[RMDB]
RNA sequence: GGGAACGACUCGAGUAGAGUCGAAAAAAACUAAUGGCUAAGUAUGAAGACAUUAAGGACAAGAACUUAGCAGGCAAACUUAAAGAUCUAAGUACCAUCCUGGAUCGCCCAGAUGAGGAAACAGAGAGUUACUUAGCUUAUUCGUAAGCUAAGUAACAAAAGAAACAACAACAACAAC
Reactivity to DMS in 0.01 (KOAc 150mM, MgCl2 10mM, bicine 150mM(pH8.5), 24C), signal-to-noise 7, nucleotides 027 to 126: a050a050a060c070u000a080a080u010g000g000c020u000a040a040g000u000a060u010g000a180a120g000a090c050a090u000u010a070a090g000g010a100c110a080a130g000a070a040c010u000u000a030g010c040a080g010g000c140a070a050a060c080u000u000a030a080a090g010a100u000c040u010a030a050g010u000a080c060c050a090u010c070c030u000g010g000a110u010c110g010c090c010c010a080g010a040u000g000a080g000g000a060a070a080c110a060g000a100g010a150
Reactivity to 2A3 in 0.01 (KOAc 150mM, MgCl2 10mM, bicine 150mM(pH8.5), 24C), signal-to-noise 8, nucleotides 027 to 126: a000a010a000c130u150a130a050u120g070g000c000u010a000a020g030u030a070u180g080a090a030g050a020c020a040u250u180a120a090g070g010a040c020a050a060g030a100a000c010u030u010a010g010c000a010g080g020c030a030a050a090c050u110u190a160a070a020g120a060u040c020u040a070a000g010u020a060c010c010a010u070c010c030u010g010g030a070u110c070g080c070c010c000a020g000a020u080g130a090g040g040a060a040a010c040a010g060a000g010a010